[RMDB]
RNA sequence: GGGAACGACUCGAGUAGAGUCGAAAAGGGCGGUAAAUUAUAACAAGAGGACGGCGACGAAAAGAGGAAGGGGUAAAGAACCGAUUUUUUGUCUCGGCUUCGCGCCAACCGUCCGCGAUUGCGCUUCGAUGACCUCACGUUUCGACGUGAGGUCAUCAAAAGAAACAACAACAACAAC
Reactivity to DMS in 0.01 (KOAc 150mM, MgCl2 10mM, bicine 150mM(pH8.5), 24C), signal-to-noise 1, nucleotides 027 to 126: g060g000g000c050g000g080u000a010a120a080u000u000a080u170a140a150c130a100a230g000a000g000g000a000c020g030g040c220g040a000c000g050a000a110a000a050g010a180g010g050a180a140g000g000g030g000u000a090a020a170g000a000a110c010c000g070a060u000u000u000u020u030u060g000u000c000u000c000g000g000c070u000u040c080g030c260g020c040c030a090a140c000c000g060u000c060c030g000c130g000a100u000u010g000c130g000c000u010u000c300
Reactivity to 2A3 in 0.01 (KOAc 150mM, MgCl2 10mM, bicine 150mM(pH8.5), 24C), signal-to-noise 1, nucleotides 027 to 126: g050g000g010c030g000g000u080a000a220a000u120u160a050u040a140a020c070a050a070g060a070g220g000a000c040g000g040c190g000a020c040g080a080a000a000a000g210a060g090g110a140a060g000g030g020g020u100a000a000a260g170a090a040c000c000g020a020u000u090u080u120u190u120g230u000c000u000c150g000g000c000u000u070c030g000c000g000c050c020a000a000c000c000g000u000c020c000g000c040g010a000u000u100g000c000g000c000u030u070c050